[RMDB]
RNA sequence: GGGAACGACUCGAGUAGAGUCGAAAAGGCGAGUUUCAGUGCGUCGCUGGAGAUGAGUGUGCCUACUUCACUGUCACCAUCACAGGUGGGGGGCCAGGUGGGCCUCGGAGGCACAGGGGAAGGUGCCGUCAUCCUAAUUUUUCGAAAUUAGGAUGACAAAAGAAACAACAACAACAAC
Reactivity to 2A3 in 0.01 (KOAc 150mM, MgCl2 10mM, bicine 150mM(pH8.5), 24C), signal-to-noise 9, nucleotides 027 to 126: g040g010c060g030a040g020u030u090u190c120a070g050u090g070c030g110u050c040g000c040u030g040g020a100g010a090u130g020a030g150u080g010u070g050c000c020u080a140c040u090u100c060a070c130u070g070u110c010a010c040c010a050u110c060a030c030a090g010g010u040g020g020g000g020g000g010c030c010a090g130g140u170g050g060g000c000c010u010c020g020g030a040g010g000c010a010c010a020g010g000g010g010a040a050g020g010u030g040c020c030
Reactivity to DMS in 0.01 (KOAc 150mM, MgCl2 10mM, bicine 150mM(pH8.5), 24C), signal-to-noise 9, nucleotides 027 to 126: g010g010c030g000a080g010u000u000u010c100a090g010u010g010c130g010u000c050g010c050u000g010g010a120g010a080u010g010a110g020u000g020u000g020c040c030u010a080c080u000u000c120a080c070u000g010u000c030a050c030c010a050u000c210a100c200a110g000g020u000g000g000g000g000g000g010c040c050a110g010g020u010g010g010g000c020c010u000c030g010g000a100g000g000c020a020c030a080g000g000g010g000a130a160g000g010u000g010c100c070
Description: Structure probing data (2A3 and DMS) for a 177-nucleotide construct. For DMS the reverse transcriptase was MarathonRT. Reactivities are given for positions 27 through 126. The reactions ran in a buffer of 150 mM KOAc, 10 mM MgCl2 and 150 mM bicine (pH 8.5), at 24 C. The 2A3 profile rests on 32,489 reads. For 2A3 the reverse transcriptase was SuperScript II with manganese.